[RMDB]
RNA sequence: GGGAACGACUCGAGUAGAGUCGAAAACUGCAGGGUCCGCGUUCCAUCCUUUCUUACCUGAUGGCCGGCAUGGUCCCAGCCUCCUCGCUGGCGCCGGCUGGGCAACAUUCCGAGGGGACCGUCCCCUGAUUCUUAUAAUGUUCGCAUUAUAAGAAUCAAAAGAAACAACAACAACAAC
Reactivity to 2A3 in 0.01 (KOAc 150mM, MgCl2 10mM, bicine 150mM(pH8.5), 24C), signal-to-noise 3, nucleotides 027 to 126: c020u080g030c050a070g020g010g060u060c030c030g060c100g050u060u010c020c020a080u040c030c020u090u180u070c040u130u110a130c030c060u060g060a090u080g100g020c000c000g020g000c030a070u110g030g040u120c000c000c000a010g010c000c010u080c020c010u070c060g030c070u040g040g000c040g010c020c020g010g000c000u010g000g010g000c000a080a010c010a080u080u040c040c020g010a050g000g060g000g010a000c000c040g050u050c010c010c000c010u020
Reactivity to DMS in 0.01 (KOAc 150mM, MgCl2 10mM, bicine 150mM(pH8.5), 24C), signal-to-noise 3, nucleotides 027 to 126: c070u010g000c120a050g010g000g020u000c030c060g020c120g010u010u010c040c020a120u000c030c070u000u000u010c050u000u000a080c130c080u020g000a080u000g000g000c110c010g000g000c020a100u010g030g020u000c280c000c000a040g010c030c060u000c110c050u000c140g000c030u000g010g010c170g020c010c010g020g000c010u000g000g000g000c030a050a090c040a070u000u010c080c040g000a080g000g010g000g010a070c070c050g010u000c030c010c010c070u000
Record summary:
The record gives the reactivity of an RNA of 177 nucleotides to 2A3 and DMS. It was measured as part of the RMDB library VIROID. For DMS the reverse transcriptase was MarathonRT. For 2A3, 4,884 sequencing reads were counted. 2A3 adducts were read by reverse transcription with SuperScript II with manganese.